Overview:
Structure probing data (DMS and 2A3) for a 177-nucleotide construct. DMS adducts were read by reverse transcription with MarathonRT. It was measured as part of the RMDB library TTRDEL. For 2A3 the reverse transcriptase was SuperScript II with manganese. Reactivities are given for positions 27 through 126.
[RMDB]
RNA sequence: GGGAACGACUCGAGUAGAGUCGAAAAGAUAUGGAGUGAGCAACAGCUUGUGUGUCGGAAACGACACCAAGACAUGCUCAUCUCCUAAGUCAAAAUCCGUUCUUUGAGUUCGCUCAAAGAACGGAAAGAAUCAUGAUGCGUUCGCGCAUCAUGAUUCAAAAGAAACAACAACAACAAC
Reactivity to DMS in 0.01 (KOAc 150mM, MgCl2 10mM, bicine 150mM(pH8.5), 24C), signal-to-noise 2, nucleotides 027 to 126: g000a030u000a300u010g000g000a000g020u000g000a000g000c000a020a040c300a180g000c000u000u030g000u020g000u010g020u000c000g010g000a050a110a210c020g000a010c000a010c000c000a010a000g000a090c100a140u000g000c000u000c000a010u020c010u000c000c000u000a030a050g000u000c010a120a100a160a090u000c000c000g010u000u000c010u000u000u000g000a000g010u000u020c300g010c000u000c000a000a020a010g000a000a000c000g030g000a000a000a020
Reactivity to 2A3 in 0.01 (KOAc 150mM, MgCl2 10mM, bicine 150mM(pH8.5), 24C), signal-to-noise 2, nucleotides 027 to 126: g000a010u040a030u130g040g000a000g000u000g000a000g020c020a010a170c060a180g100c040u070u030g080u030g010u000g000u300c000g000g000a020a060a010c020g000a000c010a010c000c010a000a000g040a090c040a040u050g000c000u010c010a040u060c000u000c000c010u050a090a020g030u010c020a000a010a010a280u000c010c000g000u000u010c020u010u000u000g010a020g000u060u170c300g080c180u000c000a000a010a000g010a000a000c000g000g000a010a000a000
The DMS profile rests on 1,502 reads. The RNA was probed in 150 mM KOAc, 10 mM MgCl2 and 150 mM bicine (pH 8.5) at 24 C.